The record gives the reactivity of an RNA of 207 nucleotides to 2A3 and DMS. For 2A3 the reverse transcriptase was SuperScript II with manganese.
RNA sequence: GGGAACGACUCGAGUAGAGUCGAAAAGAGUAAACUAGUUAACGACUACAUCCAGUAUGGUAACUGCUUUGCGACUGUAGACUUUGAACGUAAAGUAACUAAGUAUGAAGACGGUGACCGUAUCGUAAACUACGUUGGUCCUAAAGUAGUUCGUAUCGAUAAGGGCUAGUUUCGACUAGCCCUUAUCAAAAGAAACAACAACAACAAC
Reactivity to 2A3 in 0.01 (KOAc 150mM, MgCl2 10mM, bicine 150mM(pH8.5), 24C), signal-to-noise 3, nucleotides 027 to 156: g070a000g050u230a030a080a090c080u050a070g100u040u110a060a010c040g090a010c060u030a020c020a070u060c080c020a050g040u060a060u120g060g000u030a040a030c020u010g000c010u030u020u060g040c060g030a020c000u040g050u100a010g000a070c030u070u060u110g100a090a030c040g040u210a020a000a020g010u000a010a000c010u030a030a070g070u030a010u230g020a030a000g050a030c040g010g000u030g040a000c040c010g020u030a020u110c020g040u050a120a130a000c000u030a020c030g020u020u070g020g010u010c030c020u120a170a070a000g100u110a020g010u050u020c000g000u060a050u180c060
Reactivity to DMS in 0.01 (KOAc 150mM, MgCl2 10mM, bicine 150mM(pH8.5), 24C), signal-to-noise 3, nucleotides 027 to 156: g000a230g020u000a100a070a180c080u000a090g030u010u000a110a110c030g010a160c040u000a070c030a300u000c060c050a120g020u020a020u000g000g010u000a070a040c030u000g050c040u000u000u000g040c040g010a080c050u000g000u000a060g020a130c050u000u000u000g040a170a110c170g040u000a030a050a020g000u000a050a080c040u000a020a030g010u000a090u010g010a080a080g010a040c050g030g010u000g000a040c050c010g040u010a020u000c030g010u000a070a060a090c010u010a050c030g000u000u010g010g040u000c030c060u000a030a070a130g030u010a100g000u000u000c020g040u010a100u000c160
The RNA was probed in 150 mM KOAc, 10 mM MgCl2 and 150 mM bicine (pH 8.5) at 24 C. The data come from the RNA Mapping Database (RMDB), library OK3TST. As a SHAPE reagent, 2A3 marks flexible, mostly unpaired nucleotides at the ribose 2'-OH.